[RMDB]
RNA sequence: GGGAACGACUCGAGUAGAGUCGAAAAGCCACUUACGGACACUCCUUCUGACGGGCAGUCUCACUCGCAUGACUAGUCAAAGUCAUGACUGUGAGCGAGUUCGACUGAGGGUCAGUUCGAGUGUGGAGCAGUGGAGUCUAUUCGUAGACUCCACUGCAAAAGAAACAACAACAACAAC
Reactivity to 2A3 in 0.01 (KOAc 150mM, MgCl2 10mM, bicine 150mM(pH8.5), 24C), signal-to-noise 1, nucleotides 027 to 126: g080c010c000a030c060u060u110a020c050g070g000a010c000a000c020u030c040c000u000u020c020u020g010a000c000g090g040g000c020a000g000u000c000u000c010a010c010u000c030g000c000a040u090g020a150c020u040a030g070u050c030a080a100a000g200u120c110a060u050g010a030c000u010g000u020g040a020g010c010g040a000g000u010u030c030g010a010c010u000g010a010g070g070g000u020c010a000g010u000u020c000g010a020g000u000g000u020g040g010a070
Reactivity to DMS in 0.01 (KOAc 150mM, MgCl2 10mM, bicine 150mM(pH8.5), 24C), signal-to-noise 1, nucleotides 027 to 126: g000c020c010a120c100u000u040a120c120g040g010a050c000a130c050u000c020c050u000u000c000u000g000a050c030g040g000g010c010a030g000u000c000u000c100a040c000u000c100g010c010a050u000g030a070c000u020a040g010u000c080a020a180a060g030u000c200a040u000g010a010c030u000g000u000g000a060g000c010g000a000g000u000u010c090g000a040c000u000g000a060g010g020g020u000c030a000g000u010u000c130g020a060g000u000g030u000g000g020a080
Record summary: This 177-nucleotide RNA was probed chemically with 2A3 and DMS. Values are in units of 0.01, from 0 to 300, in steps of 10. For DMS the reverse transcriptase was MarathonRT. Conditions: 150 mM KOAc, 10 mM MgCl2 and 150 mM bicine (pH 8.5), 24 C. For DMS, 987 sequencing reads were counted. It was measured as part of the RMDB library OK2TRN. For 2A3 the reverse transcriptase was SuperScript II with manganese. The 2A3 profile rests on 1,665 reads.